[RMDB]
RNA sequence: GGGAACGACUCGAGUAGAGUCGAAAAAAUAACAUACGGAUGGUGAGAAUGAUGGCAGCUGCUGUUUGUUGGGCACCAGCUGUGGUCAGGUACAGUGCUAAGCACUUUAAUUACACUGUUAAGUCACUAGCCCUAAGCUGUUCGCAGCUUAGGGCUAAAAAGAAACAACAACAACAAC
Reactivity to DMS in 0.01 (KOAc 150mM, MgCl2 10mM, bicine 150mM(pH8.5), 24C), signal-to-noise 1, nucleotides 027 to 126: a000a100u010a060a080c040a080u010a140c140g000g000a070u020g010g010u000g020a020g010a160a120u000g000a040u000g020g040c000a030g030c010u010g000c230u010g010u000u000u010g000u000u000g030g000g000c040a000c110c010a000g010c020u000g010u010g000g030u000c010a000g020g000u000a030c040a010g010u000g030c190u010a060a080g000c150a040c260u000u020u010a030a150u000u010a060c000a020c030u000g000u000u000a090a070g030u000c080a070c060